[RMDB]
RNA sequence: GGGAACGACUCGAGUAGAGUCGAAAACUUUUCUUGAUUUGAGGACAUCAUGUUUUAGUGUCGCUGCACUUACAACUGGUUUGACUUUUCAAACUGUGCGGCCUGGCAAUUUUAACCAAGACUUCUAACUAAGAUGAAAGUUCGCUUUCAUCUUAGUAAAAGAAACAACAACAACAAC
Reactivity to DMS in 0.01 (KOAc 150mM, MgCl2 10mM, bicine 150mM(pH8.5), 24C), signal-to-noise 4, nucleotides 027 to 126: c060u010u010u000u000c040u000u000g000a120u000u000u000g000a060g000g010a050c090a080u020c100a100u010g000u010u000u000u000a060g010u010g010u000c030g020c020u010g000c020a010c010u010u010a100c230a110a110c260u010g010g000u000u000u000g010a080c300u000u000u010u000c010a000a000a020c030u000g010u000g020c000g010g020c050c070u000g030g000c010a030a030u000u000u000u000a050a110c040c090a080a070g010a080c300u000u000c050u000a070
Reactivity to 2A3 in 0.01 (KOAc 150mM, MgCl2 10mM, bicine 150mM(pH8.5), 24C), signal-to-noise 4, nucleotides 027 to 126: c000u070u050u070u070c030u040u060g110a160u110u040u120g050a030g000g020a010c010a080u070c020a050u140g040u010u040u020u080a070g000u010g000u010c010g000c020u020g010c020a010c010u100u160a070c080a170a050c110u070g000g020u020u000u010g020a040c040u100u190u110u060c020a020a030a020c020u040g000u000g010c010g000g000c000c040u030g010g000c010a020a040u060u080u040u090a030a020c010c010a050a020g040a060c030u020u000c000u030a030

Structure probing data (DMS and 2A3) for a 177-nucleotide construct. It was measured as part of the RMDB library 15KREP. DMS adducts were read by reverse transcription with MarathonRT. For 2A3, 4,807 sequencing reads were counted. The reactions ran in a buffer of 150 mM KOAc, 10 mM MgCl2 and 150 mM bicine (pH 8.5), at 24 C.